RNA sequence: GGGAACGACUCGAGUAGAGUCGAAAAGAUAUGGAUGCCUGAGUGGAGCAUCGAUCUACCGAUUCGGAAACGAAUCGUAGGGAGCUCGCAGGCAUCCUAAGUCAAAACGCGACCUUCGGGUCGCGAAGUUCCACGUACUGUUCGCAGUACGUGGAACAAAAGAAACAACAACAACAAC
Reactivity to DMS in 0.01 (KOAc 150mM, MgCl2 10mM, bicine 150mM(pH8.5), 24C), signal-to-noise 1, nucleotides 027 to 126: g000a010u000a040u020g000g000a040u010g000c000c000u000g010a300g060u040g040g010a010g020c000a300u000c160g010a010u030c000u000a010c090c150g000a030u010u000c010g000g020a000a000a050c000g000a000a020u000c000g010u000a010g000g010g010a000g040c000u000c000g100c000a000g010g000c000a010u000c000c010u000a000a090g020u000c010a110a040a080a200c050g010c000g000a010c000c000u010u010c210g030g020g020u000c000g010c000g000a010a020